[RMDB]
RNA sequence: GGGAACGACUCGAGUAGAGUCGAAAAAUGGGCAGUCAGGAUCCAGAAGUGCAAGCAGACAAACUCGUAAGGACAAACAAUCAGGAGACGGCUCCAGGCACUCAGGGUCACGUCACCAUGAAGCUGCUCUAUGUUGUCUUUUCGAAGACAACAUAGAAAAAGAAACAACAACAACAAC
Reactivity to DMS in 0.01 (KOAc 150mM, MgCl2 10mM, bicine 150mM(pH8.5), 24C), signal-to-noise 7, nucleotides 027 to 126: a080u010g000g010g010c040a050g020u000c060a120g010g010a050u000c020c020a070g020a100a050g020u000g010c020a090a060g020c180a050g010a070c080a080a120a100c050u000c030g020u020a060a130g000g010a070c140a070a090a100c150a070a130u000c100a080g000g000a060g000a110c200g000g000c010u000c050c040a060g000g020c040a030c030u010c040a150g000g000g010u000c030a070c090g000u010c070a150c020c010a080u000g000a070a090g000c040u000g000c080
Reactivity to 2A3 in 0.01 (KOAc 150mM, MgCl2 10mM, bicine 150mM(pH8.5), 24C), signal-to-noise 5, nucleotides 027 to 126: a000u080g010g020g000c020a030g040u090c040a040g120g010a000u010c010c000a030g060a160a010g080u030g010c030a050a040g000c030a030g050a110c060a050a170a110c040u020c050g140u130a090a060g090g040a040c060a050a210a020c040a050a100u150c050a040g060g060a050g030a080c050g050g000c010u040c030c020a060g100g000c010a000c020u000c010a020g010g000g000u020c020a020c100g040u020c010a020c050c010a020u080g030a020a010g020c020u040g020c000

The record gives the reactivity of an RNA of 177 nucleotides to DMS and 2A3.
Values cover nucleotides 27 to 126.
The DMS profile rests on 8,696 reads.